[RMDB]
RNA sequence: GGGAACGACUCGAGUAGAGUCGAAAACUGGGACCUCAUAAAGGCCAAUCACACAGGUGUAGAGUUAGACCUCAUCCAAACACAAGACCCAUCCAUUUACGCAAAACCGGAUGUUCUAUCAGUAGGUGACACCAUCUUCUACUACGGUAGGCGCAGGAUCUCUGUAUCCUUUCGAGGAUACAGAGAUAAAAGAAACAACAACAACAAC
Reactivity to DMS in 0.01 (KOAc 150mM, MgCl2 10mM, bicine 150mM(pH8.5), 24C), signal-to-noise 2, nucleotides 027 to 156: c050u000g000g020g000a020c020c020u000c070a220u010a070a060a060g010g070c020c010a130a160u010c070a100c090a180c140a070g000g010u000g020u030a140g000a090g080u000u000a090g010a040c060c010u010c020a080u000c060c050a070a110a050c100a100c050a050a040g010a100c040c010c000a060u000c010c040a210u020u000u020a050c150g010c070a040a080a070a120c000c010g040g050a080u000g020u020u000c020u030a100u000c050a090g020u000a040g010g060u000g030a110c160a090c180c130a250u010c020u010u010c020u000a050c010u000a040c100g010g010u000a080g020g050c030g080c040a040g000g010
Reactivity to 2A3 in 0.01 (KOAc 150mM, MgCl2 10mM, bicine 150mM(pH8.5), 24C), signal-to-noise 3, nucleotides 027 to 156: c030u020g000g010g120a130c010c000u090c050a110u180a090a120a050g040g000c010c000a050a070u100c040a020c030a030c030a080g060g000u060g030u090a050g020a020g030u070u090a080g060a100c020c000u030c020a080u030c000c030a110a110a040c080a010c020a120a040g030a110c000c000c000a000u040c030c010a020u020u080u180a120c120g030c100a060a090a050a030c050c000g050g030a080u090g040u150u040c030u040a060u040c020a020g030u050a010g020g050u020g020a000c040a050c090c010a080u070c020u130u000c010u040a060c000u000a020c050g060g000u010a000g010g010c000g000c050a030g030g080
Background: Chemical mapping of a 207-nucleotide RNA with DMS and 2A3. For 2A3 the reverse transcriptase was SuperScript II with manganese. DMS adducts were read by reverse transcription with MarathonRT. The DMS profile rests on 2,100 reads.